Overview
The record gives the reactivity of an RNA of 177 nucleotides to 2A3 and DMS. For DMS, 5,757 sequencing reads were counted. It was measured as part of the RMDB library M2PK50. Values are in units of 0.01, from 0 to 300, in steps of 10. The 2A3 profile rests on 7,521 reads. The RNA was probed in 150 mM KOAc, 10 mM MgCl2 and 150 mM bicine (pH 8.5) at 24 C.
RNA sequence: GGGAACGACUCGAGUAGAGUCGAAAAGUCCCCACUUUCGAGUGGGGACAAUCAAAGUUUUGGCACUCGCAGCCGGCAGCGUUGGUGCUCCCACGCGGUGCAUAACUGCCUACUUCGGUAGGCAGAACACCAUGGAUGAAUUCGUUCAUCCAUGGUGAAAAGAAACAACAACAACAAC
Reactivity to 2A3 in 0.01 (KOAc 150mM, MgCl2 10mM, bicine 150mM(pH8.5), 24C), signal-to-noise 5, nucleotides 027 to 126: g000u000c010c000c010c000a010c020u110u090u090c250g110a010g010u010g000g010g000g010a000c010a000a010u080c020a000a030a070g030u040u100u160u180g060g000c010a010c030u200c120g030c010a020g080c100c030g040g010c100a000g000c020g050u170u300g110g090u300g020c010u020c010c000c000a020c030g000c010g010g000u000g000c010a010u070a100a090c000u000g000c000c000u000a000c000u020u030c110g110g000u010a000g000g000c000a000g000a000a000
Reactivity to DMS in 0.01 (KOAc 150mM, MgCl2 10mM, bicine 150mM(pH8.5), 24C), signal-to-noise 5, nucleotides 027 to 126: g010u000c000c000c000c000a000c010u000u000u010c150g010a020g070u000g010g000g010g000a000c010a010a060u010c100a120a120a120g010u000u000u010u000g030g010c000a020c010u010c050g020c020a140g030c180c120g020g010c190a010g010c010g010u010u010g010g020u000g030c020u010c070c010c010a160c110g000c010g010g000u010g000c020a050u000a040a200c000u000g000c000c000u000a010c000u000u010c180g020g020u000a000g010g020c010a010g000a060a140